[RMDB]
RNA sequence: GGGAACGACUCGAGUAGAGUCGAAAAUCCGACUCUCAUAGGCUCUCCAACCCAACUCCUACUCAAUACGUCCUCGUCGUACAGAACGGUAACAUGUUUUCCGAACAUCCGCGCUCGGGUAUACGAGAAAGGCGUAGAUUAUUCGUAAUCUACGCAACAGACGUAUGGUGUUCGCACCAUACGUCUGAAAAGAAACAACAACAACAAC
Reactivity to 2A3 in 0.01 (KOAc 150mM, MgCl2 10mM, bicine 150mM(pH8.5), 24C), signal-to-noise 1, nucleotides 027 to 156: u000c030c020g030a030c000u010c000u000c030a080u100a200g030g030c000u000c010u000c000c000a090a150c000c020c020a000a030c010u040c010c020u050a110c000u040c080a010a040u060a080c060g070u040c000c020u040c000g040u030c020g020u040a030c020a060g020a160a040c040g010g000u070a000a060c010a080u050g080u040u020u040u100c060c040g010a020a000c030a080u050c030c030g050c010g010c050u020c000g010g020g020u080a040u000a120c000g010a000g010a140a020a030g130g000c000g020u000a000g000a000u020u010a070u080u040c060g030u050a040a000u030c000u000a000c000g000c000a000a000

The record gives the reactivity of an RNA of 207 nucleotides to 2A3. 2A3 adducts were read by reverse transcription with SuperScript II with manganese. The data come from the RNA Mapping Database (RMDB), library M2RFPK.